Chemical mapping of a 207-nucleotide RNA with 2A3.

RNA sequence: GGGAACGACUCGAGUAGAGUCGAAAACAAACCGAUCAAAGUCCCCAACUUUCCAGCAAAGACUGUUGCGGAACUUCCGGUUCAAACACUAACUACCAACAAAACAAUGUUGGCUGGUAAAGCUAACUUGAUCUUCAGUGCAGCAGCGAUGCAGCAGCGUCGCACGUUCAUUCGUGAACGUGCGACGAAAAGAAACAACAACAACAAC
Reactivity to 2A3 in 0.01 (KOAc 150mM, MgCl2 10mM, bicine 150mM(pH8.5), 24C), signal-to-noise 1, nucleotides 027 to 156: c020a000a020a010c040c000g000a000u100c140a040a050a000g030u050c020c000c010c010a000a000c030u000u000u030c070c050a020g010c140a240a110a070g050a030c040u020g000u080u010g030c050g090g000a020a060c000u070u050c010c040g020g000u050u130c090a090a110a000c040a010c080u170a250a000c030u080a050c030c010a000a030c010a010a060a050a110c030a040a110u090g000u000u030g020g050c030u050g000g100u210a040a060a030g030c020u060a050a120c010u000u120g050a050u140c000u140u050c080a020g030u000g040c030a020g000c000a000g010c020g070a060u070g020c000a050g010c000a000g000

Values cover nucleotides 27 to 156. Conditions: 150 mM KOAc, 10 mM MgCl2 and 150 mM bicine (pH 8.5), 24 C. For 2A3 the reverse transcriptase was SuperScript II with manganese.